[RMDB]
RNA sequence: GGGAACGACUCGAGUAGAGUCGAAAAUGGUGUUAAGUGGAAUAAGUGGAAAAAUAUACAUAUAUGUACAGGGGGCUACAUAUAUGUAUAUGCCCCCUCGAGUCAGUAUAAGUAGGUAUAAGGUGGAACUACUCGUCAGUUUCGACUGACGAGUAGUAAAAGAAACAACAACAACAAC
Reactivity to 2A3 in 0.01 (KOAc 150mM, MgCl2 10mM, bicine 150mM(pH8.5), 24C), signal-to-noise 1, nucleotides 027 to 126: u080g000g000u080g010u070u070a080a110g070u060g100g000a060a000u050a110a140g020u100g080g000a030a100a000a130a000u110a000u000a000c010a000u010a000u000a000u050g000u020a020c050a050g000g010g070g000g000c000u010a000c000a000u020a010u000a000u000g000u000a000u000a000u000g000c000c000c000c000c000u010c010g000a010g030u000c020a020g050u020a060u000a130a040g070u060a060g110g000u020a050u060a200a000g110g000u060g080g010a050
Reactivity to DMS in 0.01 (KOAc 150mM, MgCl2 10mM, bicine 150mM(pH8.5), 24C), signal-to-noise 2, nucleotides 027 to 126: u020g000g000u020g010u000u010a050a080g030u020g000g010a130a040u020a040a070g000u010g000g020a050a040a070a150a040u000a010u010a000c010a010u000a010u010a000u000g010u010a010c180a190g040g000g000g020g010c100u010a010c030a050u010a020u010a030u010g030u020a000u020a020u000g000c050c020c000c030c020u010c010g010a060g000u030c070a190g020u030a020u020a030a150g010u000a020g010g000u000a060u000a040a020g000g010u030g000g010a090
An RNA of 177 nucleotides, treated with 2A3 and DMS and read out base by base. The reactions ran in a buffer of 150 mM KOAc, 10 mM MgCl2 and 150 mM bicine (pH 8.5), at 24 C. 2A3 adducts were read by reverse transcription with SuperScript II with manganese.